An RNA of 177 nucleotides, treated with DMS and 2A3 and read out base by base.
RNA sequence: GGGAACGACUCGAGUAGAGUCGAAAAAAAAAAAGAUAUGGAAUAGCUCCCCACCCUGCCUCGUCCUAUGAAGUCGGAAACGAUGGAGGACACGCGAGGCAGGAGGCUAUUCCUAAGUCAAAAAAAACAUAUUACAUAAGUUCGCUUAUGUAAUAUGAAAAGAAACAACAACAACAAC
Reactivity to DMS in 0.01 (KOAc 150mM, MgCl2 10mM, bicine 150mM(pH8.5), 24C), signal-to-noise 1, nucleotides 027 to 126: a000a000a050a130a110a030a080g030a090u000a220u010g010g010a010a010u000a030g010c030u000c160c000c010c020a300c100c000c000u000g000c000c000u000c000g000u000c000c010u000a170u020g000a130a110g000u000c010g000g020a050a040a150c010g020a030u000g000g000a050g030g010a100c060a050c240g020c120g030a030g010g000c000a000g000g020a020g000g000c020u000a010u000u000c000c000u000a040a040g010u030c090a000a000a000a020a030a080a070a260
Reactivity to 2A3 in 0.01 (KOAc 150mM, MgCl2 10mM, bicine 150mM(pH8.5), 24C), signal-to-noise 1, nucleotides 027 to 126: a010a010a000a030a030a030a050g100a100u280a130u190g000g010a000a000u020a000g020c000u080c040c060c020c000a020c000c020c000u000g000c000c000u010c020g080u100c030c000u300a300u300g020a010a010g020u010c000g030g020a090a020a000c010g000a000u020g000g060a000g000g020a030c020a020c060g170c070g010a010g000g040c000a000g000g000a000g010g010c010u010a020u000u020c000c010u010a060a010g100u100c040a010a060a000a040a000a140a000a120

The 2A3 profile rests on 1,836 reads. For DMS, 1,264 sequencing reads were counted.